[RMDB]
RNA sequence: GGGAACGACUCGAGUAGAGUCGAAAAGAUUAUGUGGGAGAGGCGCCCUUUCGUUUCCUCGGAUAAUUAAUUGCCAGUCGCUGGCUUUAGCGAUCUUGAUGUCAUCUGUAGCGAUGACUAUGCUACUUUAAGGUAUGAUCCGGAUACCCCCGGUAAAAUUAUUACUCAUGUUCGCAUGAGUAAUAAUAAAAGAAACAACAACAACAAC
Reactivity to 2A3 in 0.01 (KOAc 150mM, MgCl2 10mM, bicine 150mM(pH8.5), 24C), signal-to-noise 2, nucleotides 027 to 156: g040a030u080u070a060u150g130u030g050g030g020a170g010a040g090g000c040g020c060c030c000u030u070u070c010g020u010u020u020c010c010u000c020g030g000a030u040a090a050u120u140a030a120u160u130g010c010c010a010g010u030c010g010c080u010g070g000c090u120u070u120a000g010c000g000a030u070c010u050u120g070a070u100g000u000c000a010u000c030u090g200u250a020g050c030g050a000u000g000a000c000u030a060u080g040c020u020a100c020u100u090u130a100a020g020g000u060a050u100g030a040u030c010c000g010g000a010u100a100c000c000c000c000c030g010g010u030a050a050a010
Reactivity to DMS in 0.01 (KOAc 150mM, MgCl2 10mM, bicine 150mM(pH8.5), 24C), signal-to-noise 2, nucleotides 027 to 156: g010a170u010u010a030u010g020u010g000g020g010a160g000a120g020g000c030g030c120c040c030u000u010u010c020g000u010u000u000c000c000u000c030g000g010a080u000a040a090u000u010a040a130u000u000g000c030c000a070g000u000c020g040c020u000g020g040c120u000u000u000a030g000c050g000a020u000c040u010u000g000a180u000g010u000c020a000u010c000u000g040u010a120g030c100g020a040u000g010a040c050u000a050u000g020c050u000a050c070u000u010u000a070a060g000g020u000a040u010g010a110u010c030c020g010g000a170u000a180c020c020c030c010c010g000g000u000a030a060a070